The record gives the reactivity of an RNA of 177 nucleotides to DMS and 2A3. High DMS reactivity at an A or C suggests that its Watson-Crick edge is free.
[RMDB]
RNA sequence: GGGAACGACUCGAGUAGAGUCGAAAACGUCUUUAUAGCCCUCAAUUGUAUAAACUUUGUGUGGGGGAAAUUGAAACUCCGGCUUAGCACAGUUUCCGGUUCGGUUUAUGCAUUGGUCUACAAAAAGGAUUUGCUCGGGAUUCGUCUUGAGUGGGUCAAAAGAAACAACAACAACAAC
Reactivity to DMS in 0.01 (KOAc 150mM, MgCl2 10mM, bicine 150mM(pH8.5), 24C), signal-to-noise 9, nucleotides 027 to 126: c120g000u030c040u010u010u010a100u010a120g010c040c010c020u020c130a060a050u020u020g010u010a040u010a050a030a040c030u000u020u010g020u020g020u010g000g010g000g000g000a020a040a040u030u010g000a120a120a120c060u010c020c020g010g020c060u010u010a090g000c070a090c040a050g010u010u010u010c030c030g010g020u010u010c060g000g000u000u010u000a020u010g000c030a040u010u000g000g000u010c020u000a040c150a040a040a060a060a080g000
Reactivity to 2A3 in 0.01 (KOAc 150mM, MgCl2 10mM, bicine 150mM(pH8.5), 24C), signal-to-noise 9, nucleotides 027 to 126: c020g050u020c020u010u170u050a180u120a100g040c000c010c000u030c030a060a120u080u040g040u030a070u030a090a070a040c030u080u160u120g080u040g020u110g050g010g000g010g060a040a080a070u110u140g030a090a030a010c020u010c020c010g050g000c070u060u120a030g010c030a020c010a080g030u020u070u000c030c020g090g000u060u080c030g010g010u000u030u030a030u030g010c020a020u010u080g040g000u030c030u060a080c100a040a130a030a030a030g100